[RMDB]
RNA sequence: GGGAACGACUCGAGUAGAGUCGAAAAGGUGGCUAGGACGCAGGGGACCAGUGGAGCCGUGGGAUGCUCUUCCCAAUCUGACCUGACCCCUCCCCCAGCGGGUCGCCCAGGAAUGGCGGGACCCCACAUACUAUGAAGUUCGCUUCAUAGAAAAGAAACAACAACAACAAC
Reactivity to 2A3 in 0.01 (KOAc 150mM, MgCl2 10mM, bicine 150mM(pH8.5), 24C), signal-to-noise 9, nucleotides 027 to 129: g070g020u120g020g020c040u050a050g020g020a040c070g020c080a030g020g010g000g020a050c040c060a050g040u100g090g030a020g030c030c030g060u160g030g080g010a060u120g030c010u020c000u070u040c010c000c010a010a060u080c060u050g070a070c010c000u040g090a120c000c000c010c010u020c000c000c000c000c000a020g040c130g010g000g010u020c030g150c040c000c010a040g070g140a190a120u100g020g010c060g030g030g020a020c000c000c030c000a050c000a020u120a040
Reactivity to DMS in 0.01 (KOAc 150mM, MgCl2 10mM, bicine 150mM(pH8.5), 24C), signal-to-noise 9, nucleotides 027 to 129: g000g010u030g000g020c050u030a050g030g020a010c090g030c100a000g040g030g010g010a070c100c070a020g000u050g030g020a030g010c030c050g020u040g020g020g030a070u020g000c060u030c090u010u010c010c010c010a090a200u070c070u030g030a120c030c010u000g040a180c020c000c010c010u020c020c020c000c010c050a130g030c120g000g050g000u020c000g060c060c020c030a050g020g050a130a070u030g000g060c140g030g040g020a050c020c010c030c070a070c150a100u000a110

Overview
The data come from the RNA Mapping Database (RMDB), library 15KLIB. An RNA of 170 nucleotides, treated with 2A3 and DMS and read out base by base. Reactivities are given for positions 27 through 129. For 2A3 the reverse transcriptase was SuperScript II with manganese.